An RNA of 177 nucleotides, treated with DMS and 2A3 and read out base by base. For DMS, 936 sequencing reads were counted. Source: RMDB library M2PK90, as collected in RNAgym. For DMS the reverse transcriptase was MarathonRT. For 2A3, 1,329 sequencing reads were counted. Reactivities are rounded to 0.1 and cut off at 0 and 3. For 2A3 the reverse transcriptase was SuperScript II with manganese.
RNA sequence: GGGAACGACUCGAGUAGAGUCGAAAAGUAAAAGAGGAGAAAGCGCGCACUCCUCAAGCGCGCAGAUGUACGUACCACAUCAGGUACGAACGCGCCAAGGGUGGGAGGCGCGAACCCACCGAAAAAACUAUUCCGACAGAUUCGUCUGUCGGAAUAGAAAAGAAACAACAACAACAAC
Reactivity to DMS in 0.01 (KOAc 150mM, MgCl2 10mM, bicine 150mM(pH8.5), 24C), signal-to-noise 1, nucleotides 027 to 126: g040u010a040a080a080a080g000a080g040g000a060g020a040a080a150g010c030g030c000g010c030a180c000u000c000c010u000c030a100a060g020c090g020c000g010c050a110g010a110u000g000u030a080c010g010u000a010c050c000a130c260a140u000c200a080g010g020u000a000c020g010a050a040c000g000c040g010c010c150a040a050g010g010g000u000g010g000g000a080g000g000c010g000c000g000a010a070c000c040c000a090c020c010g010a010a000a090a030a070a050
Reactivity to 2A3 in 0.01 (KOAc 150mM, MgCl2 10mM, bicine 150mM(pH8.5), 24C), signal-to-noise 1, nucleotides 027 to 126: g070u110a110a010a120a080g050a050g010g040a050g050a030a090a040g030c020g000c000g000c010a060c100u020c010c000u010c030a010a010g030c030g000c000g020c030a000g070a100u210g000u040a020c020g000u000a010c000c020a020c030a220u180c110a050g000g000u010a000c000g020a030a010c000g020c000g020c020c010a080a040g120g040g050u100g000g040g000a030g000g040c000g000c020g020a020a030c000c020c000a000c000c020g040a080a080a010a010a010a000